Annotation
This 177-nucleotide RNA was probed chemically with 2A3. Reactivities are rounded to 0.1 and cut off at 0 and 3. The reactions ran in a buffer of 150 mM KOAc, 10 mM MgCl2 and 150 mM bicine (pH 8.5), at 24 C. The 2A3 profile rests on 472 reads.
[RMDB]
RNA sequence: GGGAACGACUCGAGUAGAGUCGAAAACAGGAAACCCAACUCGGUAAGAAAGGUACUAAACUCGCACGGUUUGAUCUUAUACCGCCUCAAACCAUGAUAGAACUCGCAGAACACUAUGGGAAGGGUCGAUGGCGAUGCUUUUCGAAGCAUCGCCAUCAAAAGAAACAACAACAACAAC
Reactivity to 2A3 in 0.01 (KOAc 150mM, MgCl2 10mM, bicine 150mM(pH8.5), 24C), signal-to-noise 1, nucleotides 027 to 126: c130a070g090g100a020a010a000c020c000c000a000a000c050u000c050g060g000u100a160a000g020a300a090a070g010g040u010a050c060u160a070a000a200c070u070c080g010c000a010c020g020g010u000u030u090g000a000u000c000u000u040a030u050a210c040c000g080c070c050u000c080a000a060a060c000c000a000u050g040a040u100a220g110a030a010c000u000c020g000c060a030g020a110a030c200a000c000u010a020u100g010g000g000a020a020g000g000g020u010c090